Annotation: An RNA of 177 nucleotides, treated with 2A3 and DMS and read out base by base. The RNA was probed in 150 mM KOAc, 10 mM MgCl2 and 150 mM bicine (pH 8.5) at 24 C. For 2A3, 2,126 sequencing reads were counted. The DMS profile rests on 2,278 reads.
RNA sequence: GGGAACGACUCGAGUAGAGUCGAAAAAAUAUGAGGAAAAUGAUCGAAUUAAAACGUCCUCUAUACAUCACUCUUCACUUGGCGUGUGGAUUUGGUAAGACUAUAACUACAUGUUAUCUUAUGGCUAACCGUUACAUCGAUUCGUCGAUGUAACGGUAAAAGAAACAACAACAACAAC
Reactivity to 2A3 in 0.01 (KOAc 150mM, MgCl2 10mM, bicine 150mM(pH8.5), 24C), signal-to-noise 4, nucleotides 027 to 126: a000a020u300a160u240g010a080g020g040a040a090a070a090u250g220a150u240c090g050a050a130u180u180a170a120a010a140c060g020u000c010c000u000c030u010a020u000a030c020a040u050c030a000c030u000c000u080u130c020a020c040u060u140g040g000c030g000u010g020u010g040g070a070u010u080u070g050g010u110a040a000g020a040c060u070a040u060a170a000c030u100a010c030a070u110g020u060u030a130u010c010u070u120a120u150g050g000c030u000a060
Reactivity to DMS in 0.01 (KOAc 150mM, MgCl2 10mM, bicine 150mM(pH8.5), 24C), signal-to-noise 2, nucleotides 027 to 126: a080a020u060a030u030g000a000g020g000a050a010a070a080u000g010a080u030c120g000a170a130u010u020a020a050a050a130c100g000u000c000c010u000c020u020a050u020a020c150a120u000c080a050c030u000c000u000u000c010a070c050u000u000g000g000c040g000u000g010u000g000g000a050u000u000u000g020g000u000a040a060g000a110c080u010a050u030a020a040c020u000a070c270a130u020g000u000u020a090u020c010u000u000a000u020g000g030c130u040a110